[RMDB]
RNA sequence: GGGAACGACUCGAGUAGAGUCGAAAAGCAGCACACUGUCUGCCGCCAAGUCAUUAUUCAUCACCGCUUGAACCCACACCGUGCCAUCAUUGAGCGCAACGGCUGCCAAUACGCUACCGGUACGACGGGAGCGUAAGCCGUUCGCGGCUUACGCUCCAAAAGAAACAACAACAACAAC
Reactivity to DMS in 0.01 (KOAc 150mM, MgCl2 10mM, bicine 150mM(pH8.5), 24C), signal-to-noise 6, nucleotides 027 to 126: g010c040a040g030c070a110c110a110c120u000g000u010c030u000g020c060c060g010c050c040a080a080g000u010c070a040u000u010a090u010u000c080a050u010c040a090c050c030g000c050u010u000g010a060a100c060c020c040a090c090a080c070c080g040u020g000c020c020a080u000c110a110u010u010g000a080g010c040g000c050a050a070c060g000g020c020u000g020c060c070a060a130u000a050c060g010c020u000a070c080c030g000g030u000a060c130g000a090c110g010
Reactivity to 2A3 in 0.01 (KOAc 150mM, MgCl2 10mM, bicine 150mM(pH8.5), 24C), signal-to-noise 5, nucleotides 027 to 126: g020c010a000g010c020a030c020a030c120u110g040u130c030u030g020c010c010g020c020c010a050a020g090u080c030a080u050u240a060u130u110c040a060u060c020a060c050c020g020c050u050u050g050a090a090c000c000c020a020c010a010c010c040g060u060g010c020c010a050u090c010a040u080u200g060a040g040c030g000c020a040a070c010g060g000c020u010g020c000c000a060a020u090a100c030g030c030u030a050c010c030g050g020u060a050c040g070a030c050g090